Chemical mapping of a 177-nucleotide RNA with 2A3 and DMS. Source: RMDB library OK2TRN, as collected in RNAgym. Reactivities are given for positions 27 through 126. The 2A3 profile rests on 1,219 reads.

RNA sequence: GGGAACGACUCGAGUAGAGUCGAAAAAUGAUUAACGAUAAACUAGUACAUUUUCUGAUCCAGAAUUAUGAUGACAUCCUAAGAGCACCGCUUUCUGGACAGCUCAAAGAUGUGUAUUCACUGUACAUGAUUAAUAGGACUUCGGUCCUAUUAAUCAAAAAGAAACAACAACAACAAC
Reactivity to 2A3 in 0.01 (KOAc 150mM, MgCl2 10mM, bicine 150mM(pH8.5), 24C), signal-to-noise 2, nucleotides 027 to 126: a000u160g010a060u150u150a110a060c030g060a070u150a250a100a100c040u060a110g000u000a080c000a010u060u020u000u030c030u050g190a230u050c070c000a020g040a030a120u300u100a090u280g030a020u020g040a010c000a030u040c020c000u100a230a070g010a000g030c020a020c040c000g080c130u030u160u060c060u080g050g050a110c080a020g020c010u020c000a050a030a000g010a010u030g020u010g020u030a060u040u070c040a020c050u030g020u050a040c030a150
Reactivity to DMS in 0.01 (KOAc 150mM, MgCl2 10mM, bicine 150mM(pH8.5), 24C), signal-to-noise 4, nucleotides 027 to 126: a060u010g000a130u000u010a070a100c070g000a130u030a090a110a120c110u000a090g010u000a080c010a070u010u000u000u000c050u010g010a160u000c050c030a100g020a060a030u010u000a070u020g000a020u010g000a050c010a020u010c040c060u010a150a180g010a030g020c010a110c030c010g010c290u000u000u000c160u000g020g010a040c080a080g010c040u000c020a030a170a140g010a020u000g000u000g000u000a070u000u000c060a070c260u000g000u000a040c090a170